[RMDB]
Structure probing data (2A3 and DMS) for a 177-nucleotide construct. High 2A3 reactivity points to a flexible backbone, as in loops and unpaired stretches. The RNA was probed in 150 mM KOAc, 10 mM MgCl2 and 150 mM bicine (pH 8.5) at 24 C. Values cover nucleotides 27 to 126. For DMS, 1,998 sequencing reads were counted.
RNA sequence: GGGAACGACUCGAGUAGAGUCGAAAAGCCUCGCGCAGUCCGCGCAACUCGCGCACGAGCUGCCACAUCGACGCGAGCAGCUUGCCGUACGGCAGCGUCGAUGUCGGCGAGCUGCGCGGCAGGCGCACGAGGUAUCCCAGUUCGCUGGGAUACCUCGAAAAGAAACAACAACAACAAC
Reactivity to 2A3 in 0.01 (KOAc 150mM, MgCl2 10mM, bicine 150mM(pH8.5), 24C), signal-to-noise 2, nucleotides 027 to 126: g030c000c010u060c050g000c010g030c030a010g050u060c000c020g030c000g020c010a020a020c010u030c010g020c000g030c020a010c100g050a030g050c040u040g030c050c000a010c000a030u060c010g050a040c020g040c010g040a070g020c020a000g090c060u150u180g070c030c000g140u200a120c210g010g000c010a030g000c000g080u010c000g050a100u030g040u060c070g150g050c000g000a000g020c000u000g000c020g000c020g000g000c000a020g000g070c010g000c000a020
Reactivity to DMS in 0.01 (KOAc 150mM, MgCl2 10mM, bicine 150mM(pH8.5), 24C), signal-to-noise 2, nucleotides 027 to 126: g030c000c000u000c120g010c020g020c010a080g020u000c020c020g010c000g030c010a020a010c020u000c030g020c030g080c110a070c110g010a110g020c050u000g020c040c200a110c050a080u000c020g010a010c040g010c010g000a180g020c080a100g020c040u010u010g040c020c020g010u010a110c180g010g000c020a060g010c010g020u000c000g000a040u000g010u010c120g000g000c010g000a010g010c010u000g020c000g000c010g010g000c070a090g030g010c000g030c020a170